[RMDB]
RNA sequence: GGGAACGACUCGAGUAGAGUCGAAAAGAAUUUAACCGCUUCUUAGAUAAUACAGAAGACUUGUAUGAAGUAUCUGGUACUCAAAGAGAUAAGAUUAUUAAGUGUUUACAAAACAUUGUAGUUACUGUAUUUAUGGAUAAGGAGAAAUAACAAUGAACCUAGACUAGAAGUUCGCUUCUAGUCUAGGAAAAGAAACAACAACAACAAC
Reactivity to DMS in 0.01 (KOAc 150mM, MgCl2 10mM, bicine 150mM(pH8.5), 24C), signal-to-noise 1, nucleotides 027 to 156: g010a110a110u000u000u020a070a140c000c020g010c050u000u000c000u000u000a060g000a160u010a100a060u000a000c010a080g000a180a170g000a070c000u000u000g000u000a070u000g000a190a160g020u000a070u000c070u000g040g040u010a140c050u010c010a050a080a130g010a250g000a120u000a060a090g000a140u000u000a050u000u000a020a050g010u000g020u000u000u000a200c140a070a070a110a150c060a030u000u020g010u000a000g010u020u000a170c000u000g030u000a040u010u000u000a110u000g020g000a250u000a000a040g060g000a060g000a070a090a050u000a020a090c030a010a140u000g010a040a190
Reactivity to 2A3 in 0.01 (KOAc 150mM, MgCl2 10mM, bicine 150mM(pH8.5), 24C), signal-to-noise 1, nucleotides 027 to 156: g010a070a080u090u200u150a060a140c000c030g040c000u000u000c000u000u020a050g010a090u120a050a010u010a040c010a000g120a120a050g040a170c020u110u080g090u060a090u050g060a040a000g000u030a030u050c080u090g010g000u050a070c040u070c150a090a110a000g050a050g030a030u010a050a030g010a030u030u100a070u160u080a250a000g010u010g010u040u050u150a120c080a000a130a030a020c070a050u130u130g110u040a020g000u070u090a150c010u000g020u050a070u070u080u130a080u130g030g000a000u040a090a000g020g000a000g090a030a120a030u070a090a020c040a060a040u040g010a010a000
This 207-nucleotide RNA was probed chemically with DMS and 2A3. Reactivities are given for positions 27 through 156. For DMS the reverse transcriptase was MarathonRT. The DMS profile rests on 1,412 reads. Conditions: 150 mM KOAc, 10 mM MgCl2 and 150 mM bicine (pH 8.5), 24 C.